The record gives the reactivity of an RNA of 207 nucleotides to 2A3 and DMS. The 2A3 profile rests on 2,870 reads.

RNA sequence: GGGAACGACUCGAGUAGAGUCGAAAAGAUUAAGUGGGAGCGUCGCCCUUUCGGUGCAUCGGAUAUUAAUUAGCCAGUGCGUGGCACUACGCAUAUUGAUGUCUACUUUGGCGUAGACUCUGCCAAUUUAAGGAUUGGUGGGCAAUCCAGCCCUAGAAUGAUGGCUAAUAUUCGUAUUAGCCAUCAUAAAAGAAACAACAACAACAAC
Reactivity to 2A3 in 0.01 (KOAc 150mM, MgCl2 10mM, bicine 150mM(pH8.5), 24C), signal-to-noise 4, nucleotides 027 to 156: g050a030u160u180a070a070g050u090g020g000g000a030g030c020g030u030c030g030c010c030c000u050u110u070c060g020g000u040g010c020a050u070c040g050g010a000u010a060u110u180a190a090u110u080a020g010c030c020a030g030u010g070c020g000u020g090g050c120a040c090u060a010c030g010c010a000u040a080u090u130g070a070u110g030u000c020u010a030c040u140u080u090g090g000c020g000u000a010g010a010c000u000c000u020g000c000c000a010a010u000u050u100a120a070g100g000a010u000u000g000g000u020g010g000g000c010a000a030u020c020c000a030g000c010c000c000u020a030g060a050
Reactivity to DMS in 0.01 (KOAc 150mM, MgCl2 10mM, bicine 150mM(pH8.5), 24C), signal-to-noise 2, nucleotides 027 to 156: g020a110u000u010a060a090g030u000g030g010g010a070g040c090g010u010c060g030c030c020c000u000u000u000c070g000g040u010g000c010a080u000c060g020g010a060u000a070u000u010a070a140u000u010a170g030c010c030a070g020u000g020c030g030u010g010g010c050a150c040u000a070c030g000c000a140u000a130u010u010g000a080u010g010u000c020u000a060c040u010u010u000g040g010c090g000u000a090g010a050c030u000c050u020g000c020c000a020a040u010u000u000a100a170g010g000a080u010u040g000g000u000g000g020g000c040a040a050u010c070c060a190g010c020c010c010u000a040g010a100
The reactions ran in a buffer of 150 mM KOAc, 10 mM MgCl2 and 150 mM bicine (pH 8.5), at 24 C.